[RMDB]
RNA sequence: GGGAACGACUCGAGUAGAGUCGAAAAGCAACUCCACCACGGUACGUACGGAAACCAUCCUUCAUAAUCCAUCCGAAACGUACGGUAGCGUACGGAAACCAUCCUCUUAGAGACCACAAUAUGGAUGGGAAAGCAUGCCUACUCGCUGCCAGGAUGGCUCACUAUUCCACUUCGGUGGAAUAGUGAGAAAAGAAACAACAACAACAAC
Reactivity to 2A3 in 0.01 (KOAc 150mM, MgCl2 10mM, bicine 150mM(pH8.5), 24C), signal-to-noise 4, nucleotides 027 to 156: g070c040a040a140c070u060c030c030a040c040c030a030c050g040g000u040a010c020g050u020a000c030g040g010a130a070a030c050c020a100u080c020c030u070u150c090a130u160a230a020u050c010c000a000u040c000c010g050a130a090a050c060g060u060a020c020g010g000u020a020g000c000g000u020a020c050g000g000a000a050a020c000c000a010u010c000c000u090c040u100u140a060g030a080g060a260c100c040a080c100a060a080u100a070u260g000g000a000u020g000g000g020a080a010a000g090c070a070u240g050c000c010u050a110c050u030c020g000c000u000g010c000c000a010g000g000a000u010g010g000
Reactivity to DMS in 0.01 (KOAc 150mM, MgCl2 10mM, bicine 150mM(pH8.5), 24C), signal-to-noise 1, nucleotides 027 to 156: g010c010a050a060c090u000c030c000a130c050c030a100c070g010g090u000a090c040g030u000a120c130g010g000a050a080a100c060c040a120u000c020c020u000u000c070a060u020a100a070u020c030c000a120u000c010c000g000a080a100a110c000g050u000a030c000g000g020u020a090g000c040g080u020a060c030g000g000a050a140a080c000c000a020u010c010c000u020c150u010u000a110g020a160g000a120c060c100a160c130a100a090u010a190u000g000g000a000u000g010g010g000a030a050a160g010c080a080u020g010c040c020u000a090c050u020c010g060c050u030g000c030c050a220g020g010a060u010g020g000